[RMDB]
RNA sequence: GGGAACGACUCGAGUAGAGUCGAAAAUCGCAACCCGGCAAGCGUCGAGAUUCGGAAGACCGCACCGGGAGCGGGCGGCAAGGUCAACCAGACGCUCAAAGAAGCACAGACGGCGAUCCUGCACACUCGCGAUCAGGCUCAGCAGGAAAUCAUGUUCUCAUCAUCGAGUUUUCGAACUCGAUGAUGAAAAAGAAACAACAACAACAAC
Reactivity to 2A3 in 0.01 (KOAc 150mM, MgCl2 10mM, bicine 150mM(pH8.5), 24C), signal-to-noise 1, nucleotides 027 to 156: u070c010g000c050a030a170c000c000c000g010g030c050a060a130g000c000g000u050c050g010a010g040a300u290u150c130g080g010a060a080g010a020c040c030g040c070a100c010c000g030g050g000a010g040c010g020g040g000c010g000g010c070a050a180g020g000u070c050a070a000c070c010a030g020a050c070g000c010u060c020a130a150a010g120a070a000g020c020a030c040a090g070a050c050g090g000c020g010a090u040c010c000u050g000c020a010c000a010c070u020c050g000c040g020a070u140c060a060g110g030c090u010c070a030g000c050a020g000g000a000a120a000u180c130a080u110g120u050u000c080

Description: Chemical mapping of a 207-nucleotide RNA with 2A3. It was measured as part of the RMDB library OK3TST. The reactions ran in a buffer of 150 mM KOAc, 10 mM MgCl2 and 150 mM bicine (pH 8.5), at 24 C.